This 177-nucleotide RNA was probed chemically with DMS. The data come from the RNA Mapping Database (RMDB), library OK2TST. The DMS profile rests on 905 reads.
[RMDB]
RNA sequence: GGGAACGACUCGAGUAGAGUCGAAAACUGGAGUUGGAUGGCUACAGAAGAUAUCUAAGGAACGACUUUUUAGAAACAUUCGCUCAAGAGUCAGAAGCCAUUGCAGAUGCGGAGCUAGACUUGCAGCGUGCAGCGUGAAAUUCGUUUCACGCUGCACAAAAGAAACAACAACAACAAC
Reactivity to DMS in 0.01 (KOAc 150mM, MgCl2 10mM, bicine 150mM(pH8.5), 24C), signal-to-noise 1, nucleotides 027 to 126: c110u000g020g020a100g040u000u000g000g010a030u010g000g010c020u000a090c150a110g000a130a100g000a090u020a040u000c030u030a030a130g000g010a050a110c090g020a070c060u000u000u010u000u000a030g000a050a070a140c110a100u000u000c040g030c010u000c020a100a050g010a050g000u000c000a070g030a160a070g030c000c010a060u000u000g050c050a110g000a090u000g060c030g020g000a040g000c070u000a220g000a040c130u000u000g020c040a070g000c090